[RMDB]
RNA sequence: GGGAACGACUCGAGUAGAGUCGAAAAGGUGGCUCUGAGAGAAGGCUCACACAACCGUGAACAGAGUCACCGAUUUAGCAUGUUCGUCCUACUUAGGACCUCCUAAGGUAGUAGGACGUUCAUGCGAGGCUAGCAUUACCUUCGGGUAGUGCUAGCCAAAAGAAACAACAACAACAAC
Reactivity to 2A3 in 0.01 (KOAc 150mM, MgCl2 10mM, bicine 150mM(pH8.5), 24C), signal-to-noise 9, nucleotides 027 to 126: g000g000u000g000g000c000u000c000u020g070a100g040a010g070a300a110g110g020c030u070c030a050c000a010c010a060a200c070c070g060u040g010a040a010c000a000g000a000g010u000c000a000c000c000g000a000u000u010u030a010g000c000a000u000g000u000u000c000g000u000c000c000u000a020c010u040u070a080g070g110a120c020c020u190c010c040u130a110a050g050g000u020a020g060u010a000g000g000a000c000g000u010u000c000a000u000g000c000g000a020
Reactivity to DMS in 0.01 (KOAc 150mM, MgCl2 10mM, bicine 150mM(pH8.5), 24C), signal-to-noise 8, nucleotides 027 to 126: g000g030u000g020g000c000u000c000u010g000a160g000a230g010a130a140g010g010c100u000c150a140c210a120c300a100a100c050c090g000u010g020a220a230c000a010g010a010g010u000c010a000c000c000g000a010u020u020u020a100g000c010a020u000g000u000u000c000g010u000c000c000u000a020c000u000u020a050g000g000a160c200c300u010c090c050u020a060a080g000g020u010a080g020u000a000g000g000a010c010g010u000u000c000a000u000g000c020g000a050